[RMDB]
Conditions: 150 mM KOAc, 10 mM MgCl2 and 150 mM bicine (pH 8.5), 24 C. Structure probing data (2A3) for a 207-nucleotide construct. High 2A3 reactivity points to a flexible backbone, as in loops and unpaired stretches. It was measured as part of the RMDB library M2RFPK. For 2A3, 725 sequencing reads were counted.

RNA sequence: GGGAACGACUCGAGUAGAGUCGAAAAACGGCUGGCUACGGCCAGCCGAAUCGGGCCAAAGGCAGUCGCCCGACGACACAGGCGAUCGUUCGCCCAAGCCCUGCACACGACUAUACGUAGUCGUGAAUUGAUCACGCAACCUUCGGGUUGCGUGAAAGCGAGAAUAUAAGUUCGCUUAUAUUCUCGCAAAAGAAACAACAACAACAAC
Reactivity to 2A3 in 0.01 (KOAc 150mM, MgCl2 10mM, bicine 150mM(pH8.5), 24C), signal-to-noise 1, nucleotides 027 to 156: a000c020g000g000c010u010g000g040c010u020a060c220g070g000c000c000a000g000c000c000g000a000a020u020c010g000g060g000c000c050a090a100a070g100g000c060a080g050u070c040g010c000c000c000g010a050c050g030a000c030a000c040a110g000g000c030g010a040u050c030g210u120u160c070g100c000c000c000a030a040g000c000c010c020u050g010c080a050c000a000c010g010a000c030u000a010u020a020c280g100u010a010g020u000c000g020u000g010a010a030u070u090g050a010u030c000a000c020g000c000a000a000c000c000u000u020c050g080g020g070u040u030g000c020g000u000g000a000a000a010